RNA sequence: GGGAACGACUCGAGUAGAGUCGAAAACUGCUUCACGAUGUUGUAGGAAAUCGGGUCAUCGAUCGGCCGCUGGACAAUGGCGUAAUUCCACAACGUGUACAGACUUUCCGGAGAAAUGACUUCCGACAAAGGCGGUACGACGUCGUGCUGCGUGACAAGUACCACCCUGAUUCGUCAGGGUGGUACUAAAAGAAACAACAACAACAAC
Reactivity to 2A3 in 0.01 (KOAc 150mM, MgCl2 10mM, bicine 150mM(pH8.5), 24C), signal-to-noise 1, nucleotides 027 to 156: c040u030g010c000u110u080c000a010c040g000a000u040g000u000u000g020u000a050g000g120a060a130a060u150c020g060g010g020u090c080a070u080c080g160a040u040c000g000g010c050c080g020c020u030g000g000a020c000a160a280u090g060g040c000g010u130a120a120u300u120c040c000a010c030a140a040c100g060u070g000u040a020c060a040g090a190c060u110u070u010c030c000g010g010a130g050a000a060a010u070g000a000c000u180u110c040c020g000a040c140a120a030a100g200g000c030g060g000u040a030c010g020a000c000g010u030c000g000u000g020c000u000g000c000g090u040g020a000c000a010